[RMDB]
RNA sequence: GGGAACGACUCGAGUAGAGUCGAAAACUCUGAUUAUUGUGUGAAGUGAAGCACUGGCACGUUUCCGCGAUGUUGUGAUGAAGGUGAAAAGAUCGCUCUUAAUUAGAUUAAAAACAUUUUUUUCUUCCGACAGACAUAUAUUCGUAUAUGUCUGUCGAAAAGAAACAACAACAACAAC
Reactivity to DMS in 0.01 (KOAc 150mM, MgCl2 10mM, bicine 150mM(pH8.5), 24C), signal-to-noise 3, nucleotides 027 to 126: c070u000c030u000g010a100u010u020a040u010u020g000u050g040u000g000a110a080g000u020g000a120a190g000c060a040c020u000g000g000c030a050c020g010u000u010u000c050c070g000c070g010a080u010g020u000u000g020u020g020a110u010g020a080a070g030g010u010g000a020a040a080a110g010a040u000c010g000c040u020c050u010u000a030a040u020u000a080g000a160u000u020a030a040a050a080a070c080a040u000u000u000u000u000u010u000c030u010u000c290
Reactivity to 2A3 in 0.01 (KOAc 150mM, MgCl2 10mM, bicine 150mM(pH8.5), 24C), signal-to-noise 3, nucleotides 027 to 126: c040u050c020u030g070a080u040u210a090u090u180g050u000g030u030g140a220a090g010u050g160a080a030g000c020a000c060u030g070g000c010a010c060g020u020u060u000c010c010g020c010g050a040u090g000u240u060g030u020g010a080u080g030a020a010g110g040u060g070a010a100a010a010g060a010u070c060g010c020u040c040u050u010a030a000u120u070a070g070a120u100u300a030a020a020a100a030c120a150u090u100u100u000u000u010u000c000u010u030c000